[RMDB]
RNA sequence: GGGAACGACUCGAGUAGAGUCGAAAAUCGAAAAGUUUAAUACACAGGAUUGGUUUAAUUCUACAUGACUGGACCAGUAUGUACCUGAAAGAAAAAUCAAGCUUGUUGGAAUAUCAUUUGACCAGAGGUGUUAUGUAUCUUUCGAGAUACAUAACACAAAAGAAACAACAACAACAAC
Reactivity to 2A3 in 0.01 (KOAc 150mM, MgCl2 10mM, bicine 150mM(pH8.5), 24C), signal-to-noise 3, nucleotides 027 to 126: u080c000g000a090a030a010a000g030u070u090u160a140a070u180a060c020a000c000a020g000g020a040u000u010g020g000u030u010u020a050a040u090u020c010u010a020c000a050u100g140a140c020u050g030g130a090c070c000a020g020u020a030u060g010u010a070c030c070u040g010a120a070a010g030a040a150a010a000a000u010c010a010a010g000c010u050u030g020u140u070g140g050a060a030u070a020u120c050a060u030u050u130g040a080c020c020a020g040a050g270
Reactivity to DMS in 0.01 (KOAc 150mM, MgCl2 10mM, bicine 150mM(pH8.5), 24C), signal-to-noise 5, nucleotides 027 to 126: u010c070g000a060a060a090a130g010u000u000u010a050a110u010a170c060a020c010a020g000g000a040u000u000g000g010u000u000u000a070a140u000u000c040u000a030c020a020u000g010a030c040u000g020g020a150c240c050a040g020u000a020u000g010u000a040c230c140u010g000a040a060a080g010a010a070a040a030a030u000c010a010a010g000c010u000u000g010u010u010g010g000a100a110u000a040u010c050a100u010u000u000g010a150c030c050a130g010a110g000